[RMDB]
RNA sequence: GGGAACGACUCGAGUAGAGUCGAAAAAGUCGACCCCUGACAUCUAAAACCCCAUGCGGCUUAAGCCUCUGCGACAUGGCAGAUUUAGCAGUUAUAAUGCGAUCCACAAACACACCAAGGGAAGACGAUAUUAUCUUAUUUUCGAAUAAGAUAAUAUAAAAGAAACAACAACAACAAC
Reactivity to DMS in 0.01 (KOAc 150mM, MgCl2 10mM, bicine 150mM(pH8.5), 24C), signal-to-noise 6, nucleotides 027 to 126: a100g000u000c010g000a300c040c020c020c050u000g010a070c070a070u000c070u010a040a070a120a130c060c050c010c030a080u000g020c050g010g010c030u000u000a060a120g010c060c050u000c050u000g010c070g010a090c140a060u000g010g010c060a050g010a080u000u000u000a090g020c030a040g000u010u000a060u010a080a070u010g010c020g000a070u000c020c040a040c100a070a070a070c090a060c090a060c060c040a090a100g000g010g010a050a150g010a050c100g000
Reactivity to 2A3 in 0.01 (KOAc 150mM, MgCl2 10mM, bicine 150mM(pH8.5), 24C), signal-to-noise 3, nucleotides 027 to 126: a010g010u000c000g010a030c010c000c000c010u030g040a020c030a060u050c040u180a030a070a130a130c030c020c010c010a020u100g030c060g070g000c010u110u110a070a030g010c010c010u030c040u070g030c050g120a130c040a150u070g050g000c010a010g010a060u050u090u120a020g000c020a020g060u090u070a140u080a190a090u050g020c020g000a010u000c010c000a080c000a060a070a000c050a030c010a020c070c020a020a000g030g000g010a040a010g030a010c020g000